Chemical mapping of a 207-nucleotide RNA with DMS and 2A3. 2A3 adducts were read by reverse transcription with SuperScript II with manganese. The data come from the RNA Mapping Database (RMDB), library OK3TST.
[RMDB]
RNA sequence: GGGAACGACUCGAGUAGAGUCGAAAAGACGUGGAGGUCUCGCGCCCUCCUUUGCGCGUAAGUACGUCGAAAUUCGGUGCUUUGGAUCGCACCGUAUGAUCCAUUAGAUAUCCGCUCUGUGCCGCGGUUGGGCAUUUACACUUACCCGAAAGGGGAAGAUGACCGAUUUAUUCGUAAAUCGGUCAUCAAAAGAAACAACAACAACAAC
Reactivity to DMS in 0.01 (KOAc 150mM, MgCl2 10mM, bicine 150mM(pH8.5), 24C), signal-to-noise 3, nucleotides 027 to 156: g010a040c070g030u010g030g010a070g050g030u000c000u000c050g030c070g020c160c070c000u000c050c020u030u000u000g010c000g050c040g020u000a080a160g010u000a040c050g030u000c020g000a120a150a140u000u000c020g010g020u000g000c020u010u010u010g000g000a100u000c190g020c010a130c030c040g010u000a010u000g010a090u000c010c020a100u000u000a140g010a130u000a110u010c060c030g030c040u010c020u000g010u010g020c020c050g050c060g020g030u000u000g010g000g020c040a120u000u000u020a120c130a090c040u010u000a240c000c000c000g010a120a110a190g010g000g010g010a050a090
Reactivity to 2A3 in 0.01 (KOAc 150mM, MgCl2 10mM, bicine 150mM(pH8.5), 24C), signal-to-noise 4, nucleotides 027 to 156: g010a000c040g030u050g000g080a050g020g050u020c030u040c040g030c000g010c040c000c010u140c010c080u070u060u130g000c020g000c010g030u040a100a070g050u030a040c030g000u020c040g040a000a060a040u070u060c010g000g000u000g000c020u130u150u200g060g030a060u130c060g000c020a020c020c010g010u010a040u040g030a020u020c000c040a040u060u100a070g060a110u070a080u130c040c020g030c040u030c030u120g070u070g050c030c020g000c020g060g000u070u080g020g000g000c010a000u070u050u130a060c080a000c030u080u060a030c000c000c000g020a060a030a020g000g000g000g010a000a030